An RNA of 207 nucleotides, treated with 2A3 and DMS and read out base by base.
RNA sequence: GGGAACGACUCGAGUAGAGUCGAAAAAUCGCGCCUGGUCGGAACAUAACGACGGCGGGCCGGUGGGGAAACAGGGGGCUACCGUGGGAUAGCGAUGAGACAGCCCCUCCGAUGGCACCAAGCGUCGCACACUGGCCAUACUUCGGUAUGGCCAGAACUACACCUACUAGUUCGCUAGUAGGUGUAGAAAAGAAACAACAACAACAAC
Reactivity to 2A3 in 0.01 (KOAc 150mM, MgCl2 10mM, bicine 150mM(pH8.5), 24C), signal-to-noise 3, nucleotides 027 to 156: a000u040c020g000c010g010c010c020u110g060g000u050c020g020g050a200a090c020a200u220a170a000c040g040a000c010g040g040c010g010g000g000c030c000g030g020u090g010g040g010g000a110a130a060c060a130g070g020g000g000g000c000u030a030c020c030g030u020g000g070g020a030u080a060g040c010g040a040u040g020a040g020a040c020a030g000c000c030c020c000u010c010c000g070a060u070g060g000c040a040c130c020a100a020g030c010g030u040c020g010c040a080c030a030c050u000g000g010c000c000a000u000a010c000u010u040c140g040g000u010a000u000g000g000c000c000a000g000a000a000
Reactivity to DMS in 0.01 (KOAc 150mM, MgCl2 10mM, bicine 150mM(pH8.5), 24C), signal-to-noise 2, nucleotides 027 to 156: a050u010c020g000c030g010c000c000u010g100g010u000c020g000g010a100a260c070a080u010a160a120c040g010a010c000g010g010c020g020g000g010c050c020g000g000u000g000g040g050g000a110a080a100c040a060g020g040g040g060g000c020u010a040c010c030g000u030g010g000g020a080u000a100g030c020g020a100u000g000a180g000a090c040a090g010c010c000c020c010u010c010c050g060a100u000g020g000c040a090c030c000a050a170g000c060g020u010c030g020c050a090c110a180c040u000g010g020c020c000a010u000a000c000u000u000c300g030g040u000a000u010g000g000c000c000a000g000a020a100
The DMS profile rests on 3,258 reads. The data come from the RNA Mapping Database (RMDB), library M2RFPK.